Chemical mapping of a 207-nucleotide RNA with 2A3.
[RMDB]
RNA sequence: GGGAACGACUCGAGUAGAGUCGAAAACACACAGGAGCACUUCCUAAAGUCUCUGCUGGGAGGGGCUGGUGGAAGCCUUGCCUGGGGACACUGGGACUCACUCUUUCACCUGAGGGGAUGGUUAUCUCCUAAGGCCUGGUCCUCACUGGCCAAAUAAAUACUCAAAAUGCUUCGGCAUUUUGAGUAUAAAAGAAACAACAACAACAAC
Reactivity to 2A3 in 0.01 (KOAc 150mM, MgCl2 10mM, bicine 150mM(pH8.5), 24C), signal-to-noise 1, nucleotides 027 to 156: c030a000c020a020c040a050g150g000a050g020c060a030c100u010u050c020c000u060a020a020a020g010u050c010u010c000u030g100c150u190g000g080g030a000g040g030g020g020c030u020g040g030u060g000g050a050a000g000c000c010u060u080g030c020c020u020g000g050g030g000a000c060a060c180u040g030g000g060a030c030u050c020a050c030u030c050u040u260u180c100a050c060c000u040g030a010g000g020g000g000a000u030g040g100u200u200a040u070c060u020c000c020u040a050a000g030g010c010c020u000g010g000u040c010c010u070c030a050c150u070g000g000c000c010a100a110a030u300a040a090